The record gives the reactivity of an RNA of 177 nucleotides to DMS and 2A3. In probing experiments dimethyl sulfate is read out at A N1 and C N3, which are open when not base-paired. Source: RMDB library TTRDEL, as collected in RNAgym. The DMS profile rests on 4,763 reads. DMS adducts were read by reverse transcription with MarathonRT. The RNA was probed in 150 mM KOAc, 10 mM MgCl2 and 150 mM bicine (pH 8.5) at 24 C.

RNA sequence: GGGAACGACUCGAGUAGAGUCGAAAAGAUAUGGAUUGUAGGGAGCUCCACCAUCGGAAACGAUGGGAGAGCGAGGAUCUACACGGUCCUAAGUCAAAACCUGUCUGUGCUUCGGCACAGACAGGAAGUUAAUGAACGAGUUCGCUCGUUCAUUAACAAAAGAAACAACAACAACAAC
Reactivity to DMS in 0.01 (KOAc 150mM, MgCl2 10mM, bicine 150mM(pH8.5), 24C), signal-to-noise 5, nucleotides 027 to 126: g010a040u000a070u010g000g000a010u000u000g000u000a020g000g000g000a020g030c010u000c000c290a240c000c000a010u000c000g010g000a010a020a060c000g020a000u000g000g000g000a140g000a010g010c010g010a080g010g000a060u010c010u000a000c040a020c300g020g000u010c000c000u010a020a070g010u000c000a130a050a120a180c000c000u000g000u000c000u000g020u000g000c000u010u000c240g040g010c000a000c000a000g010a010c000a000g000g030a000a010
Reactivity to 2A3 in 0.01 (KOAc 150mM, MgCl2 10mM, bicine 150mM(pH8.5), 24C), signal-to-noise 2, nucleotides 027 to 126: g030a010u010a020u060g020g010a030u080u070g000u010a000g000g020g000a020g010c010u000c020c030a190c000c000a030u010c000g010g000a010a010a010c010g010a010u000g020g000g020a070g000a000g000c010g010a070g020g000a000u000c000u020a010c050a040c220g100g000u000c010c000u000a020a010g020u000c020a020a050a140a200c000c000u010g000u000c000u000g010u000g020c010u030u090c270g080g000c000a000c000a000g010a000c000a000g000g010a000a000